[RMDB]
RNA sequence: GGGAACGACUCGAGUAGAGUCGAAAAGAUAUGGAUCGUGGUGGUCUUUUGACGGGAAUCGGAAACGAUUCUCCGAUAAGACCACCACGAUCCUAAGUCAAAACAGCCAUGGUUCGCCAUGGCUGAACUCUAGCACAUACUUCGGUAUGUGCUAGAGAAAAGAAACAACAACAACAAC
Reactivity to DMS in 0.01 (KOAc 150mM, MgCl2 10mM, bicine 150mM(pH8.5), 24C), signal-to-noise 3, nucleotides 027 to 126: g000a020u000a300u000g010g000a020u000c000g010u000g000g030u000g020g000u000c000u000u030u010u000g000a300c300g000g010g000a000a000u010c000g010g020a080a100a180c000g000a010u000u000c000u000c000c000g020a120u000a010a010g000a000c000c010a010c000c000a000c000g000a000u000c000c000u000a000a080g010u000c000a100a090a130a270c000a020g000c000c010a000u000g000g020u010u030c270g030c000c010a010u000g020g010c000u010g010a010a040